An RNA of 177 nucleotides, treated with 2A3 and DMS and read out base by base. It was measured as part of the RMDB library OK2TRN. The DMS profile rests on 11,324 reads. Reactivities are given for positions 27 through 126. DMS adducts were read by reverse transcription with MarathonRT.
RNA sequence: GGGAACGACUCGAGUAGAGUCGAAAAACGUUACGUUGACUAGUCCAAAGACUUACAGGAAUAGAUGUAUCGAUGAUGUUGAUACUAUGUGAUAUGUGUGCAAAGACUGUUCUCUUGGUGGCGUCGCCAGUUAUUCUAGCUUCGGCUAGAAUAACUGAAAAGAAACAACAACAACAAC
Reactivity to 2A3 in 0.01 (KOAc 150mM, MgCl2 10mM, bicine 150mM(pH8.5), 24C), signal-to-noise 4, nucleotides 027 to 126: a000c040g020u060u050a010c040g020u040u050g050a060c040u040a020g020u000c000c010a040a050a030g040a100c050u070u090a030c070a030g000g090a070a070u070a070g100a060u130g010u010a010u010c030g040a050u190g080a080u250g100u110u040g010a020u000a030c030u030a060u090g090u020g050a040u060a060u240g080u020g010u020g020c030a040a040a050g060a040c030u020g030u070u030c040u000c000u060u050g050g000u020g030g010c040g020u020c010g060c050
Reactivity to DMS in 0.01 (KOAc 150mM, MgCl2 10mM, bicine 150mM(pH8.5), 24C), signal-to-noise 7, nucleotides 027 to 126: a050c050g010u000u000a050c090g010u010u000g010a120c080u000a090g010u000c020c030a070a140a140g010a110c060u000u000a050c080a050g010g010a100a060u010a050g010a110u010g010u000a010u000c010g010a040u000g000a100u010g010u010u000g010a030u000a020c010u000a090u000g020u000g010a110u000a040u000g010u000g010u000g010c040a070a120a120g000a050c030u010g000u000u000c050u000c040u000u000g020g010u010g010g000c070g010u000c070g020c150